[RMDB]
RNA sequence: GGGAACGACUCGAGUAGAGUCGAAAAUGCUGCGCGAUGACGAGGAGAGCGACGAGACGCAGAAGCUCCACGACAUGACGUCAUCGUCGUACGCCUCAGGCACCACCGCUGCGUCGUCGUACCGACCGUCAGCGCAGUCAUUCGUGACUGCGCUGACAAAAGAAACAACAACAACAAC
Reactivity to DMS in 0.01 (KOAc 150mM, MgCl2 10mM, bicine 150mM(pH8.5), 24C), signal-to-noise 2, nucleotides 027 to 126: u010g000c070u000g000c080g040c050g020a010u000g000a000c050g010a030g010g000a060g040a290g000c000g070a100c060g000a050g000a040c030g020c040a010g160a090a250g000c020u020c070c110a130c110g040a190c100a090u010g000a240c080g000u000c000a030u000c030g040u030c000g000u000a010c100g030c010c060u000c040a090g000g000c070a100c000c050a130c090c150g020c090u020g020c010g000u000c020g000u020c040g010u010a080c090c050g000a100c220c100
Reactivity to 2A3 in 0.01 (KOAc 150mM, MgCl2 10mM, bicine 150mM(pH8.5), 24C), signal-to-noise 4, nucleotides 027 to 126: u180g000c040u000g010c010g000c030g050a030u020g030a020c070g040a050g040g040a070g020a050g070c000g000a000c010g020a000g000a030c030g010c020a020g030a140a040g030c030u100c060c030a110c070g130a070c060a060u120g030a140c010g000u010c000a160u010c050g010u000c000g000u020a030c080g030c000c000u040c020a030g020g000c020a020c060c000a060c000c040g010c010u060g000c030g010u030c010g000u020c010g040u060a060c010c040g030a010c000c060

Conditions: 150 mM KOAc, 10 mM MgCl2 and 150 mM bicine (pH 8.5), 24 C.
Chemical mapping of a 177-nucleotide RNA with DMS and 2A3.
As a SHAPE reagent, 2A3 marks flexible, mostly unpaired nucleotides at the ribose 2'-OH.
The DMS profile rests on 1,692 reads.
DMS (dimethyl sulfate) methylates the pairing face of unpaired adenines and cytosines.
DMS adducts were read by reverse transcription with MarathonRT.
The data come from the RNA Mapping Database (RMDB), library OK1LIB.
2A3 adducts were read by reverse transcription with SuperScript II with manganese.